[RMDB]
RNA sequence: GGGAACGACUCGAGUAGAGUCGAAAACUGGGGCACAACAAUAAUACGUGUUCCACAACUUUCAGCGCGGGUGUGUCUUCUUUUCCUGCUUGAGAUAGCGCUAUGUCACUGUUCCUCAUUUGAAGAUGGUAUCUCCUCACUUCGGUGAGGAGAUACCAAAAGAAACAACAACAACAAC
Reactivity to 2A3 in 0.01 (KOAc 150mM, MgCl2 10mM, bicine 150mM(pH8.5), 24C), signal-to-noise 1, nucleotides 027 to 126: c030u020g010g010g000g000c010a010c000a030a020c000a170a300u110a300a010u070a180c150g000u000g000u060u100c000c000a000c000a000a220c020u010u010u020c020a030g050c000g020c000g000g000g070u070g000u000g000u000c000u000u010c000u010u040u000u040c030c000u060g050c010u040u050g030a060g100a100u130a070g050c020g000c040u210a110u220g050u000c000a000c070u000g000u110u000c000c000u080c040a070u130u130u300g120a060a090g110a040u140
About this RNA
Structure probing data (2A3) for a 177-nucleotide construct. It was measured as part of the RMDB library RFM100. The reactions ran in a buffer of 150 mM KOAc, 10 mM MgCl2 and 150 mM bicine (pH 8.5), at 24 C.